The data come from the RNA Mapping Database (RMDB), library OK2TST.
Chemical mapping of a 177-nucleotide RNA with DMS and 2A3.
The 2A3 profile rests on 1,090 reads.
DMS adducts were read by reverse transcription with MarathonRT.
The RNA was probed in 150 mM KOAc, 10 mM MgCl2 and 150 mM bicine (pH 8.5) at 24 C.
RNA sequence: GGGAACGACUCGAGUAGAGUCGAAAAUUCGCGCCUGGUUGGACUUCUGAAUGCGUAGGAAAUGGCUGUCGCGAAAAUUUUCAGCGUAACGACGCGCACAUGUGGAGUAAAAUGCAGGAUAUAUGGAAUUAUCGCUGCUAUUCGUAGCAGCGAUAAUAAAAGAAACAACAACAACAAC
Reactivity to DMS in 0.01 (KOAc 150mM, MgCl2 10mM, bicine 150mM(pH8.5), 24C), signal-to-noise 3, nucleotides 027 to 126: u010u000c030g010c080g000c040c010u000g020g010u000u000g000g000a060c050u000u000c020u010g020a110a120u010g000c020g030u000a110g020g010a040a100a110u010g000g010c040u010g010u000c100g040c080g000a050a000a100a150u000u000u010u030c030a110g010c030g020u020a030a150c130g000a130c060g000c010g020c020a010c130a080u020g020u020g010g010a020g000u010a030a020a030a020u010g030c030a020g000g010a110u000a050u010a100u010g020g010a170
Reactivity to 2A3 in 0.01 (KOAc 150mM, MgCl2 10mM, bicine 150mM(pH8.5), 24C), signal-to-noise 1, nucleotides 027 to 126: u040u000c020g000c050g000c100c000u020g000g000u000u030g030g030a030c020u030u010c010u060g110a150a040u020g000c010g000u030a130g030g100a150a210a030u080g080g000c080u030g030u000c010g030c020g150a020a030a070a050u230u140u090u030c030a030g000c020g030u050a050a010c030g040a030c060g020c010g050c020a000c000a090u180g170u130g060g000a030g010u010a020a030a000a000u090g170c000a000g010g000a010u030a000u000a040u160g140g040a070